RNA sequence: GGGAACGACUCGAGUAGAGUCGAAAAAACGGUUCACUUGAGGGCAAGUAGCGAUUGGAAGCCUUAUCGGCGUGCAGCGAACUGCCGAACCGUGGUGACUAGCCAGCAACCGCCCAGAGUUACCACACACCCUCCUGACUUUCGAGUCAGGAGGGUGAAAAGAAACAACAACAACAAC
Reactivity to 2A3 in 0.01 (KOAc 150mM, MgCl2 10mM, bicine 150mM(pH8.5), 24C), signal-to-noise 2, nucleotides 027 to 126: a010a020c050g000g020u070u020c050a060c100u160u180g110a280g010g030g060c060a130a050g000u030a000g060c020g120a160u040u120g030g030a120a000g000c000c050u160u160a300u250c100g030g000c070g020u180g040c000a010g030c000g000a080a030c010u000g000c000c010g000a040a020c010c000g000u000g010g020u010g010a000c000u010a000g110c030c030a030g050c030a060a130c030c020g020c030c010c010a030g040a020g060u030u050a050c010c030a000c000a000
Reactivity to DMS in 0.01 (KOAc 150mM, MgCl2 10mM, bicine 150mM(pH8.5), 24C), signal-to-noise 1, nucleotides 027 to 126: a060a060c000g030g040u000u000c010a230c170u020u020g080a130g040g010g000c000a030a040g000u000a270g010c010g000a120u010u000g040g000a030a300g000c020c010u000u000a050u010c230g010g040c000g020u010g000c000a050g000c050g000a030a150c130u000g030c000c010g000a010a030c040c020g000u000g000g030u000g000a050c030u000a120g000c060c020a110g000c120a060a040c080c080g000c000c030c000a100g030a060g010u010u000a020c130c010a160c140a130